[RMDB]
RNA sequence: GGGAACGACUCGAGUAGAGUCGAAAAUUAGUUGCUGCGUUAUCUUGAAUGCUCUGUCUUAAACCAUGCAUUGCUUGGUUAAGCGUAUUCGCAUUUUGUUCAAUUUGAUGAACUGCAGUUACUAAAGAGGCCGAUGAUAAUUCGUUAUCAUCGGCCUAAAAGAAACAACAACAACAAC
Reactivity to DMS in 0.01 (KOAc 150mM, MgCl2 10mM, bicine 150mM(pH8.5), 24C), signal-to-noise 1, nucleotides 027 to 126: u000u000a020g030u000u000g000c020u000g020c030g020u010u010a080u010c080u000u000g010a020a020u000g010c000u010c150u010g020u010c000u000u000a050a050a050c010c000a000u010g000c020a250u010u000g030c010u000u000g000g010u010u010a010a000g020c030g000u000a080u010u010c230g000c020a100u000u000u000u010g010u000u010c110a030a120u010u010u020g010a050u010g010a010a030c050u000g030c020a010g010u000u010a000c000u000a000a040a090g000
Reactivity to 2A3 in 0.01 (KOAc 150mM, MgCl2 10mM, bicine 150mM(pH8.5), 24C), signal-to-noise 2, nucleotides 027 to 126: u030u000a010g020u010u000g000c000u000g020c000g010u030u030a040u010c040u090u080g010a000a000u010g000c020u000c010u110g140u060c000u060u060a060a040a040c020c000a020u000g010c040a300u090u300g010c000u000u000g000g000u000u000a000a010g010c030g020u050a140u040u180c070g000c040a030u040u060u050u130g160u020u150c120a130a120u090u130u260g040a100u070g090a010a000c020u130g020c000a000g000u000u020a000c000u000a000a060a060g140
An RNA of 177 nucleotides, treated with DMS and 2A3 and read out base by base. For 2A3, 1,265 sequencing reads were counted. The data come from the RNA Mapping Database (RMDB), library OK2TRN.